[RMDB]
RNA sequence: GGGAACGACUCGAGUAGAGUCGAAAAUUGAAGGUAAAACAGCCUGUGGGUGAAACACACCCACAGGGCCCUUUGGGCGCUAGCACUUUGGUAUCACGGUACCUUUGUGCGCCUGUUUUACCGAAGGUAACGAAGAGCUUCGGCUCUUCGAAAAGAAACAACAACAACAAC
Reactivity to DMS in 0.01 (KOAc 150mM, MgCl2 10mM, bicine 150mM(pH8.5), 24C), signal-to-noise 8, nucleotides 027 to 129: u050u030g020a140a140g030g020u000a010a000a050a020c000a000g000c010c000u020g000u000g020g000g040u000g000a130a160a080c300a220c020a010c000c000c000a020c000a020g000g000g000c020c010c020u080u020u060g030g010g030c040g040c000u080a060g040c000a000c000u000u020u000g000g010u020a000u020c000a130c290g070g000u000a010c010c020u030u060u010g020u020g020c000g020c030c010u010g030u010u010u010u000a010c010c010g010a020a050g030g030u050a050a130
Reactivity to 2A3 in 0.01 (KOAc 150mM, MgCl2 10mM, bicine 150mM(pH8.5), 24C), signal-to-noise 2, nucleotides 027 to 129: u090u080g060a070a010g010g000u000a010a000a000a000c000a000g000c010c000u000g010u000g000g010g000u000g030a060a120a000c110a010c000a000c050c000c010a000c000a000g000g000g000c000c000c000u040u090u170g010g000g000c020g000c060u080a060g000c000a000c010u010u000u000g010g010u010a010u010c030a030c200g120g000u000a000c000c000u000u010u010g010u000g000c000g000c000c000u010g000u000u000u000u000a000c000c000g000a010a010g060g030u060a060a040